[RMDB]
RNA sequence: GGGAACGACUCGAGUAGAGUCGAAAAGCGAACAGCAAAAACAAGCGGCGUUGGCGAAAGAAUAUAAAGCUCAGGUGAAGCAGCUUAUUGAAAUGAACCGAAUCACCAUUGCCAAUGGCGAUAUUGGCUCUAAUGCAAGGUUCGCCUUGCAUUAGAGAAAAGAAACAACAACAACAAC
Reactivity to 2A3 in 0.01 (KOAc 150mM, MgCl2 10mM, bicine 150mM(pH8.5), 24C), signal-to-noise 3, nucleotides 027 to 126: g040c030g040a070a050c040a050g040c040a000a020a060a030a080c080a100a010g110c010g090g010c030g030u030u040g010g000c000g040a110a050a030g060a100a070u200a010u060a190a130a020g000c010u020c100a020g000g020u030g040a020a000g010c040a010g010c030u110u070a110u110u190g050a110a080a080u090g030a030a030c040c060g000a020a010u010c000a010c010c010a040u010u120g000c000c020a020a020u040g090g050c010g020a020u050a110u190u080g060g000
Reactivity to DMS in 0.01 (KOAc 150mM, MgCl2 10mM, bicine 150mM(pH8.5), 24C), signal-to-noise 4, nucleotides 027 to 126: g000c040g010a100a090c110a110g020c070a040a120a080a140a090c100a060a060g020c040g000g000c020g050u000u000g010g000c000g000a070a100a090g000a090a070u010a120u010a050a100a090g030c060u010c110a110g000g010u010g000a040a090g010c050a080g020c010u000u000a040u000u010g010a070a070a080u000g010a030a060c050c050g010a090a070u000c020a000c010c000a200u020u010g020c040c040a020a020u010g000g010c050g000a040u010a070u000u000g000g010

Chemical mapping of a 177-nucleotide RNA with 2A3 and DMS. 2A3 is a SHAPE reagent: it acylates the 2'-hydroxyl of flexible nucleotides of all four kinds. For 2A3, 3,047 sequencing reads were counted.